[RMDB]
RNA sequence: GGGAACGACUCGAGUAGAGUCGAAAAGAGGUGCGUCCUCAUCAUGGGAAGGAGGCUGUGGAUCCGCGGCAGGGGCGGGCCAGAGGAGGCGACCCUUCGCACUUCCACGCGGUGAACGUGGCGCAGCGUAUUGAGCGACGUUCGCGUCGCUCAAUACAAAAGAAACAACAACAACAAC
Reactivity to 2A3 in 0.01 (KOAc 150mM, MgCl2 10mM, bicine 150mM(pH8.5), 24C), signal-to-noise 2, nucleotides 027 to 126: g150a000g040g080u030g020c020g050u080c000c030u010c010a040u060c010a040u110g100g000g030a040a040g030g040a030g000g080c040u060g030u050g060g020a130u030c040c040g010c010g040g000c050a060g040g020g050g020c060g030g010g020c020c000a050g050a050g090g060a030g040g030c020g000a060c020c000c000u040u050c030g010c010a030c000u040u000c000c010a090c040g000c030g040g000u030g020a070a040c040g030u090g030g010c010g000c030a030g050c040
Reactivity to DMS in 0.01 (KOAc 150mM, MgCl2 10mM, bicine 150mM(pH8.5), 24C), signal-to-noise 2, nucleotides 027 to 126: g000a060g050g010u000g000c100g000u010c000c010u010c020a120u060c040a090u010g000g000g000a090a060g000g010a070g000g000c010u000g000u010g020g000a040u020c030c030g030c040g020g010c150a050g010g020g000g010c010g010g000g000c020c020a070g030a120g010g020a080g000g000c030g000a100c080c040c050u000u000c060g000c040a110c100u000u000c010c010a120c060g000c030g010g020u030g020a040a110c080g020u010g020g000c100g020c050a040g000c120